Overview: The record gives the reactivity of an RNA of 170 nucleotides to DMS and 2A3. It was measured as part of the RMDB library 15KLIB. For 2A3 the reverse transcriptase was SuperScript II with manganese. In probing experiments dimethyl sulfate is read out at A N1 and C N3, which are open when not base-paired. For DMS the reverse transcriptase was MarathonRT.
[RMDB]
RNA sequence: GGGAACGACUCGAGUAGAGUCGAAAAAAGCGUGCUGUACGCUCGCAUCCCGAUUUCAAAUUGCUACACAAUUUACAAGCAGACAUUUGCUACAAGUUCGUCCUUUGGGAUUAUGAACGUAGCAAUAUAACCGGAUAGUUCGCUAUCCGGAAAAGAAACAACAACAACAAC
Reactivity to DMS in 0.01 (KOAc 150mM, MgCl2 10mM, bicine 150mM(pH8.5), 24C), signal-to-noise 7, nucleotides 027 to 129: a070a030g020c000g000u000g000c040u050g000u060a100c180g020c000u000c010g030c060a130u010c000c000c000g020a120u040u020u020c120a030a050a020u000u000g000c050u070a100c220a170c110a000a030u000u000u000a040c220a050a060g010c050a000g020a080c160a080u040u020u010g000c000u030a030c040a070a120g010u050u010c000g000u000c010c010u000u050u080g040g000g010a000u010u050a060u120g020a000a000c030g000u060a000g020c000a000a000u030a010u020a060a060
Reactivity to 2A3 in 0.01 (KOAc 150mM, MgCl2 10mM, bicine 150mM(pH8.5), 24C), signal-to-noise 9, nucleotides 027 to 129: a010a010g010c010g010u020g010c010u070g050u120a030c080g000c010u010c010g010c000a050u010c000c000c000g020a070u070u100u080c050a050a070a050u060u050g030c050u160a060c090a010c020a120a080u070u110u160a120c070a160a040g030c010a010g080a080c070a120u020u030u020g010c000u000a010c010a150a110g000u000u010c000g000u000c010c000u080u180u300g160g010g000a030u070u060a120u290g010a000a000c010g000u000a000g000c000a000a000u050a010u010a030a010
Background:
The reactions ran in a buffer of 150 mM KOAc, 10 mM MgCl2 and 150 mM bicine (pH 8.5), at 24 C.